RNA sequence: GGGAACGACUCGAGUAGAGUCGAAAAGGAACUCUUAACUGGGGCCCAUGUCAUCGAUGAACACUUUGCCAAUGCACCCCCUGAACAGAAUGUUCCUCUGCUUCUUGCAUUGGUGGGGGUUUGGUACGCGAUAGCACGUAUUCGUACGUGCUAUCGCAAAAGAAACAACAACAACAAC
Reactivity to 2A3 in 0.01 (KOAc 150mM, MgCl2 10mM, bicine 150mM(pH8.5), 24C), signal-to-noise 5, nucleotides 027 to 126: g010g030a040a050c030u030c030u080u140a140a140c200u140g000g000g020g010c040c010c030a040u080g090u060c030a040u070c100g200a130u160g090a160a000c080a030c200u010u080u190g000c000c000a020a020u110g010c010a130c000c010c000c000c020u050g020a040a000c010a040g240a150a150u280g030u020u050c020c020u000c010u020g020c010u050u120c040u120u190g010c010a040u030u060g050g000u120g010g020g000g000g050u040u010u020g000g040u040a090c090
Reactivity to DMS in 0.01 (KOAc 150mM, MgCl2 10mM, bicine 150mM(pH8.5), 24C), signal-to-noise 1, nucleotides 027 to 126: g060g020a130a060c020u000c020u010u020a150a100c190u000g000g020g010g030c000c010c090a040u020g000u000c080a120u000c090g000a010u050g000a040a020c020a050c030u030u000u030g000c000c010a000a010u010g020c050a200c020c010c020c000c000u000g000a040a040c150a010g020a040a090u020g000u000u010c000c030u010c000u060g000c080u020u040c110u000u010g050c030a070u030u000g020g020u040g020g020g000g000g020u040u000u020g010g000u000a070c140